Chemical mapping of a 207-nucleotide RNA with 2A3 and DMS. Reactivities are rounded to 0.1 and cut off at 0 and 3.
[RMDB]
RNA sequence: GGGAACGACUCGAGUAGAGUCGAAAAUUGAAUUUGAACCGUCCUGUUAUCGAAAGAUAGGCAGAAGAUACGAAAUGUGUGACAGCAUGGGAAGUAAAGGCAGACCGUGGUUCCCUUGAGUAUCUUAAUUAGGGGGACGAGUUCGCUCGUCCCCCAACAUGGAAACACUGUUCGCAGUGUUUCCAUGAAAAGAAACAACAACAACAAC
Reactivity to 2A3 in 0.01 (KOAc 150mM, MgCl2 10mM, bicine 150mM(pH8.5), 24C), signal-to-noise 1, nucleotides 027 to 156: u040u020g060a010a040u100u050u100g020a080a030c000c020g030u030c000c000u000g020u020u010a010u030c020g040a070a120a030g010a010u040a020g140g000c020a020g020a190a000g000a020u020a030c020g020a050a050a070u040g040u000g020u040g070a000c010a030g040c010a060u020g010g000g010a020a020g000u110a060a100a070g010g000c050a020g030a060c010c010g010u020g020g190u050u110c020c000c040u040u010g020a010g000u000a000u050c000u030u060a100a130u110u150a120g000g000g010g010g000a000c000g020a010g010u030u060c170g020c030u000c000g030u000c000c000c000c000c000a000a000
Reactivity to DMS in 0.01 (KOAc 150mM, MgCl2 10mM, bicine 150mM(pH8.5), 24C), signal-to-noise 2, nucleotides 027 to 156: u000u000g000a070a140u000u000u000g020a110a170c010c000g000u000c050c000u000g010u000u010a060u010c040g010a160a130a240g010a030u000a030g030g000c010a050g010a050a030g020a060u000a040c040g030a060a060a040u010g020u010g000u010g010a130c140a140g000c020a060u000g000g010g010a160a120g040u000a040a060a110g010g010c040a100g010a200c030c040g030u000g010g000u000u000c010c000c000u000u000g000a140g000u000a040u000c040u000u010a050a170u000u000a140g010g010g000g000g030a010c020g010a010g020u000u010c180g030c010u000c010g000u000c030c000c000c000c000a000a010

For DMS the reverse transcriptase was MarathonRT.